This 177-nucleotide RNA was probed chemically with DMS and 2A3.
The data come from the RNA Mapping Database (RMDB), library OK2TRN.
[RMDB]
RNA sequence: GGGAACGACUCGAGUAGAGUCGAAAAGCGGUACUGCUCGCGGCGCCGGUACCAGGCCAUCGCGAUAUGCGCUCGAGUAGGCCUGAUCCAGUACGGCCUACGGUACCGUACGCGCAGCGCGCGCGUACGCUUUUCGCCGAUUCGUCGGCGAAAAGCGAAAAGAAACAACAACAACAAC
Reactivity to DMS in 0.01 (KOAc 150mM, MgCl2 10mM, bicine 150mM(pH8.5), 24C), signal-to-noise 1, nucleotides 027 to 126: g020c010g000g030u000a060c030u010g050c040u000c040g000c020g000g000c070g020c030c010g000g010u000a020c020c000a220g000g000c010c030a070u000c060g010c200g010a150u000a050u000g000c200g020c060u000c100g000a230g010u000a050g010g000c000c020u000g000a120u000c140c150a120g000u010a120c190g000g010c010c000u000a020c010g010g010u000a000c020c000g030u020a030c130g020c000g030c010a090g000c090g020c110g010c040g040c050g000u000a090
Reactivity to 2A3 in 0.01 (KOAc 150mM, MgCl2 10mM, bicine 150mM(pH8.5), 24C), signal-to-noise 1, nucleotides 027 to 126: g070c050g020g160u070a010c090u180g060c070u020c010g030c020g000g030c030g010c020c010g030g040u040a070c000c040a010g020g090c000c000a030u030c030g060c040g210a100u050a040u250g220c260g000c040u050c060g040a100g010u090a030g000g020c000c040u050g030a060u040c070c000a020g100u110a040c060g000g000c030c000u020a040c030g000g000u000a040c000c000g020u060a060c050g000c000g010c000a060g100c020g030c020g000c000g010c020g060u010a030

Annotation
As a SHAPE reagent, 2A3 marks flexible, mostly unpaired nucleotides at the ribose 2'-OH. Reactivities are rounded to 0.1 and cut off at 0 and 3. 2A3 adducts were read by reverse transcription with SuperScript II with manganese. DMS adducts were read by reverse transcription with MarathonRT.